[RMDB]
RNA sequence: GGGAACGACUCGAGUAGAGUCGAAAAGAGGCAAUACCCUUGGAUAAGAUCUAGUGUCACUGUGGAGCGACUGAGAAAAGAUGGAUGUGCAUCUGAAGAAAGAGAUCCUAGACUAUCUUUAGUGGUCGGAGCAUUCAUUAUUCGUAAUGAAUGCUCCAAAAGAAACAACAACAACAAC
Reactivity to DMS in 0.01 (KOAc 150mM, MgCl2 10mM, bicine 150mM(pH8.5), 24C), signal-to-noise 6, nucleotides 027 to 126: g010a090g000g000c090a110a080u040a060c020c010c000u010u010g000g010a050u000a040a060g000a160u000c010u000a020g000u020g000u010c020a080c040u010g010u020g010g010a070g000c100g000a090c060u020g000a120g010a110a050a060a020g010a030u010g000g010a160u030g000u020g010c030a010u000c010u000g000a080a110g020a070a110a060g000a080g000a040u000c090c010u000a030g010a040c020u000a020u010c020u000u010u010a040g020u030g030g020u010c200
Reactivity to 2A3 in 0.01 (KOAc 150mM, MgCl2 10mM, bicine 150mM(pH8.5), 24C), signal-to-noise 9, nucleotides 027 to 126: g080a020g050g030c040a030a050u090a190c010c000c000u020u060g060g000a030u040a130a150g110a180u020c010u020a030g030u020g010u090c020a030c120u050g040u140g130g060a050g040c030g090a060c040u070g050a040g100a120a100a020a010g060a030u070g060g060a090u120g080u130g090c030a040u000c000u070g030a080a060g070a080a170a010g070a000g000a010u020c010c020u010a010g010a040c010u010a010u040c000u050u160u060a120g020u170g130g010u020c080
An RNA of 177 nucleotides, treated with DMS and 2A3 and read out base by base. DMS adducts were read by reverse transcription with MarathonRT. The 2A3 profile rests on 11,216 reads. The RNA was probed in 150 mM KOAc, 10 mM MgCl2 and 150 mM bicine (pH 8.5) at 24 C.